[RMDB]
Overview:
The record gives the reactivity of an RNA of 177 nucleotides to DMS and 2A3. The reactions ran in a buffer of 150 mM KOAc, 10 mM MgCl2 and 150 mM bicine (pH 8.5), at 24 C. It was measured as part of the RMDB library OK1LIB. The 2A3 profile rests on 4,196 reads. 2A3 adducts were read by reverse transcription with SuperScript II with manganese.
RNA sequence: GGGAACGACUCGAGUAGAGUCGAAAAGAUUGCCGAAGCAUUACUGGAGAAGUACGGCCAGGAUUAACGCGGUAAAUUUCCGUGAUCGCGCAGCCAGGCGGCGGUGCGCUCAAUGCCUUCGUCCAGCCCACUGAGGUAUCUUCGGAUACCUCAGUGGAAAAGAAACAACAACAACAAC
Reactivity to DMS in 0.01 (KOAc 150mM, MgCl2 10mM, bicine 150mM(pH8.5), 24C), signal-to-noise 2, nucleotides 027 to 126: g010a070u010u010g000c070c000g000a040a050g000c110a060u020u010a150c130u010g000g000a070g000a120a050g000u030a030c130g050g000c030c020a020g000g000a050u010u020a110a300c090g000c000g010g010u000a040a070a170u000u010u010c010c020g000u000g000a050u030c000g040c050g050c050a110g000c040c010a180g060g010c160g000g010c010g020g000u000g000c010g020c040u000c000a030a040u000g000c070c020u000u000c060g000u000c010c030a060g000c220
Reactivity to 2A3 in 0.01 (KOAc 150mM, MgCl2 10mM, bicine 150mM(pH8.5), 24C), signal-to-noise 6, nucleotides 027 to 126: g150a100u130u150g030c020c000g010a010a010g020c040a050u040u120a140c040u070g050g020a050g020a200a050g100u120a090c060g070g000c010c000a020g010g050a050u070u070a120a050c050g020c030g020g020u070a150a130a200u160u170u020c000c030g010u040g030a040u070c020g000c000g000c010a020g020c010c000a110g120g070c070g020g010c030g070g030u030g000c010g010c010u020c000a030a050u080g020c000c030u020u040c020g040u020c000c020a040g010c040